[RMDB]
RNA sequence: GGGAACGACUCGAGUAGAGUCGAAAACACUUGGAGUUCGCUCCAAGUGAAACCAUUGCCCAUUGGCAAUAAUACCGCAGGCGGUAAAGCGGAACAAAUAAGAAAGCGAAGACUUCGGUCUUCGCAAGGUGCUCAAUAAGUUCGCUUAUUGAGCACCAAAAGAAACAACAACAACAAC
Reactivity to 2A3 in 0.01 (KOAc 150mM, MgCl2 10mM, bicine 150mM(pH8.5), 24C), signal-to-noise 2, nucleotides 027 to 126: c000a010c010u000u000g000g020a020g020u070u090c110g080c110u000c000c000a010a000g000u000g000a030a000a000c020c000a030u020u050g000c050c050c090a290u100u300g020g000c010a010a000u140a080a020u080a090c000c000g000c010a040g100g040c070g120g050u140a130a050a000g000c000g000g030a040a020c050a040a150a080u240a100a150g140a220a040a000g000c010g020a000a010g000a000c000u000u050c250g040g000u000c000u000u000c000g000c020a000a000
Reactivity to DMS in 0.01 (KOAc 150mM, MgCl2 10mM, bicine 150mM(pH8.5), 24C), signal-to-noise 1, nucleotides 027 to 126: c000a000c000u010u010g000g000a020g000u000u000c180g020c010u010c000c000a000a000g000u000g000a050a030a140c020c050a110u000u000g000c000c000c300a240u000u000g000g050c010a010a010u000a080a080u000a160c020c010g030c000a070g000g000c090g010g020u000a090a080a090g010c000g060g000a070a120c130a070a040a070u010a180a070g000a110a110a180g010c000g010a010a000g000a000c000u010u000c080g000g020u000c000u000u000c000g010c000a020a000

Source: RMDB library M2PK50, as collected in RNAgym.
Structure probing data (2A3 and DMS) for a 177-nucleotide construct.
The 2A3 profile rests on 1,496 reads.
For DMS, 649 sequencing reads were counted.
DMS adducts were read by reverse transcription with MarathonRT.
Reactivities are given for positions 27 through 126.